Source: RMDB library VIROID, as collected in RNAgym. Structure probing data (2A3) for a 207-nucleotide construct.
[RMDB]
RNA sequence: GGGAACGACUCGAGUAGAGUCGAAAACACCGUCCUUUUUUGCCAGUUCGCUCCAGGUUUCCCCGGGGAUCCCUGAAGCGCUCCUCCGAGCCGCCUUCUUUUUUCUUUUCUGCUCAGGAGGUCAGGUGUGAACCACAGGAACCACGAGUUUAGUUCCGACUAGAUUUAACUUCGGUUAAAUCUAGUCAAAAGAAACAACAACAACAAC
Reactivity to 2A3 in 0.01 (KOAc 150mM, MgCl2 10mM, bicine 150mM(pH8.5), 24C), signal-to-noise 1, nucleotides 027 to 156: c080a000c010c000g080u090c040c100u070u130u050u030u160u160g090c050c040a070g020u070u020c030g000c010u010c020c030a020g020g000u020u040u070c020c050c090c090g000g030g000g060a030u000c040c000c000u000g060a220a170g100c070g050c100u130c020c010u000c000c040g010a020g070c060c030g060c080c020u140u230c020u130u250u100u080u130u140c060u120u240u100u000c030u030g000c000u030c020a100g000g010a000g020g000u020c020a000g000g110u150g030u020g210a020a020c020c010a030c070a040g010g020a000a000c000c000a040c040g000a010g020u050u070u090a010g000u020u020c000c000

The RNA was probed in 150 mM KOAc, 10 mM MgCl2 and 150 mM bicine (pH 8.5) at 24 C.